[RMDB]
RNA sequence: GGGAACGACUCGAGUAGAGUCGAAAAUAAAAAGAUCGAAAGAUCAAAAGGCGUUCAUGUUGUCGACCUUCACGUGGUGACCGCUGUCAACUGACUGCUGUCAGGUUAACAGACAACAAAAAAAAAAGUAACAACAUGGAUUCGUCCAUGUUGUUACAAAAGAAACAACAACAACAAC
Reactivity to DMS in 0.01 (KOAc 150mM, MgCl2 10mM, bicine 150mM(pH8.5), 24C), signal-to-noise 2, nucleotides 027 to 126: u010a050a080a090a100a120g000a000u000c000g030a140a090a120g000a000u000c000a030a060a100a080g000g000c020g010u000u000c030a080u000g010u040u010g000u000c020g000a020c000c000u000u000c140a050c250g000u010g040g000u000g000a040c040c030g020c010u000g000u000c080a110a140c030u010g000a010c000u010g000c260u000g020u000c010a030g000g000u000u010a020a020c010a060g000a000c020a020a010c040a050a010a000a000a000a020a080a050a030a120
Reactivity to 2A3 in 0.01 (KOAc 150mM, MgCl2 10mM, bicine 150mM(pH8.5), 24C), signal-to-noise 2, nucleotides 027 to 126: u160a000a080a010a030a000g010a010u030c010g000a070a030a060g020a000u010c040a030a020a040a030g020g020c010g010u040u030c030a050u090g010u040u010g000u000c000g000a020c000c000u100u090c150a080c180g160u130g010g000u010g010a000c010c030g020c030u000g040u060c020a060a080c070u050g000a010c010u150g100c050u050g120u000c010a000g000g040u030u060a030a010c020a070g030a010c000a020a000c030a040a020a000a000a010a000a000a010a000a000
Conditions: 150 mM KOAc, 10 mM MgCl2 and 150 mM bicine (pH 8.5), 24 C.
Chemical mapping of a 177-nucleotide RNA with DMS and 2A3.
For DMS the reverse transcriptase was MarathonRT.
2A3 adducts were read by reverse transcription with SuperScript II with manganese.
Source: RMDB library M2PK90, as collected in RNAgym.
The DMS profile rests on 1,457 reads.